Notes
An RNA of 177 nucleotides, treated with DMS and 2A3 and read out base by base. Conditions: 150 mM KOAc, 10 mM MgCl2 and 150 mM bicine (pH 8.5), 24 C.

RNA sequence: GGGAACGACUCGAGUAGAGUCGAAAAUAAGCUCCCUGAUGUAAGCUCCCUGAAUAAAUUCACAGCAAUACAUCAAAGUAGUAUGAAAGUUGGCCAGUAUAAAUAAAUUCCCUGUUAACGGAAAGAGCUUAAGAUCUGGAUUCGUCCAGAUCUUAAGAAAAGAAACAACAACAACAAC
Reactivity to DMS in 0.01 (KOAc 150mM, MgCl2 10mM, bicine 150mM(pH8.5), 24C), signal-to-noise 5, nucleotides 027 to 126: u020a110a150g010c060u000c010c040c020u020g020a020u010g020u010a040a220g000c010u000c010c010c020u020g010a030a070u020a090a130a160u020u000c020a030c140a010g020c030a080a110u010a030c010a030u000c040a060a130a100g000u010a040g020u000a070u010g020a060a070a060g000u010u000g000g000c020c030a060g000u010a070u000a040a050a080u020a030a080a170u010u010c000c000c010u000g010u010u010a050a060c080g010g010a070a070a080g010a060g010
Reactivity to 2A3 in 0.01 (KOAc 150mM, MgCl2 10mM, bicine 150mM(pH8.5), 24C), signal-to-noise 4, nucleotides 027 to 126: u180a040a000g000c010u000c010c000c000u000g010a010u010g020u030a050a040g010c010u000c000c000c020u000g010a030a010u120a220a100a170u100u010c030a030c050a020g000c010a060a070u000a040c000a000u010c000a010a110a020g020u040a000g020u040a060u150g120a110a100a040g060u040u030g030g030c020c020a050g070u120a030u060a200a100a020u120a030a060a030u080u030c010c000c010u040g040u170u120a100a040c030g000g040a080a070a000g080a070g030